Notes:
The data come from the RNA Mapping Database (RMDB), library OK3TST. This 207-nucleotide RNA was probed chemically with DMS and 2A3. For 2A3, 1,291 sequencing reads were counted. For DMS the reverse transcriptase was MarathonRT. Reactivities are given for positions 27 through 156.
[RMDB]
RNA sequence: GGGAACGACUCGAGUAGAGUCGAAAAACUGAUAUCCAGCUAUUCUAAUGCCUCCAACGAACUCACGUCGAAUAUAAAUGAUUUCGAUCUGUAUUCGUAUAUGUCUUCGGAUAAUAUAGACUUACGUCUACUAAAAUAUCUAAUUGUGGAUAAACGGCAAAUGAGCUGAUUUCGAUCAGCUCAUUUGAAAAGAAACAACAACAACAAC
Reactivity to DMS in 0.01 (KOAc 150mM, MgCl2 10mM, bicine 150mM(pH8.5), 24C), signal-to-noise 2, nucleotides 027 to 156: a160c080u000g000a120u000a070u000c170c070a040g020c010u000a060u000u010c020u000a120a150u010g010c040c010u000c090c010a060a100c010g000a010a020c010u000c030a060c100g020u000c010g010a040a020u000a070u000a070a080a170u020g020a140u000u010u010c130g010a050u000c050u000g030u010a060u000u000c000g000u010a070u000a070u020g000u010c030u000u010c030g020g000a120u020a090a210u000a060u010a020g000a020c000u020u000a110c130g010u000c020u000a080c040u010a060a040a090a150u000a030u010c040u010a020a140u000u000g030u000g000g000a040u000a050a080a100c070g000g000
Reactivity to 2A3 in 0.01 (KOAc 150mM, MgCl2 10mM, bicine 150mM(pH8.5), 24C), signal-to-noise 3, nucleotides 027 to 156: a000c040u070g050a020u040a040u140c040c010a000g020c070u080a120u190u140c020u150a210a160u170g030c020c020u060c040c020a010a010c030g020a020a010c030u020c010a020c020g040u000c000g000a020a000u130a010u100a090a220a120u120g080a070u080u020u050c040g020a030u000c050u050g020u020a020u000u020c020g000u070a060u000a020u170g050u010c030u050u070c030g050g010a020u040a100a100u120a040u050a020g020a000c020u050u070a040c150g020u020c010u010a020c020u040a030a020a090a080u080a040u040c020u030a070a170u190u110g010u040g040g010a000u020a050a150a000c020g030g030